[RMDB]
Chemical mapping of a 207-nucleotide RNA with DMS and 2A3.
Source: RMDB library OK3TST, as collected in RNAgym.
RNA sequence: GGGAACGACUCGAGUAGAGUCGAAAAUGGAUUAACAGUGUUAAAGAAACAAUUGCUAAGAACAGCAGUCAAGUACUCAACCAGGCCUUCAAUGAGGUGGAGAUAGACACUGACUUUGAGGAGAUUGUUUCAUGUUUAACAAGAUAUGUCAGUGCCAUCCCUUUAAUACGUUCGCGUAUUAAAGGGAAAAAGAAACAACAACAACAAC
Reactivity to DMS in 0.01 (KOAc 150mM, MgCl2 10mM, bicine 150mM(pH8.5), 24C), signal-to-noise 3, nucleotides 027 to 156: u020g000g030a240u000u010a100a100c060a150g000u000g040u000u000a070a070a210g000a110a090a070c050a020a040u000u000g000c010u010a060a240g010a030a100c040a040g010c000a070g020u000c040a100a140g010u010a100c030u010c020a040a080c000c020a120g050g030c050c010u000u000c080a160a120u010g000a150g010g020u000g020g020a060g000a140u000a060g000a040c010a010c010u000g000a060c080u010u000u000g010a300g000g010a050g000a070u000u000g020u010u000u020c060a180u000g010u000u000u010a040a070c020a040a060g000a160u000a040u000g010u000c000a060g060u000g000c020c000a100
Reactivity to 2A3 in 0.01 (KOAc 150mM, MgCl2 10mM, bicine 150mM(pH8.5), 24C), signal-to-noise 4, nucleotides 027 to 156: u060g030g000a030u100u070a100a060c020a050g050u000g030u100u090a110a100a040g010a000a010a030c010a010a040u030u060g020c030u080a110a000g010a120a030c020a040g020c010a000g030u020c010a000a110g040u020a100c000u000c010a020a080c030c030a020g080g110c020c020u080u090c090a070a160u250g030a020g030g010u020g010g010a020g010a010u090a040g030a030c030a010c010u020g010a050c000u000u040u120g060a080g040g030a070g010a030u010u020g030u010u040u020c040a040u090g050u110u010u010a020a020c020a020a040g050a130u040a020u190g060u030c040a020g020u010g060c000c010a060
The reactions ran in a buffer of 150 mM KOAc, 10 mM MgCl2 and 150 mM bicine (pH 8.5), at 24 C.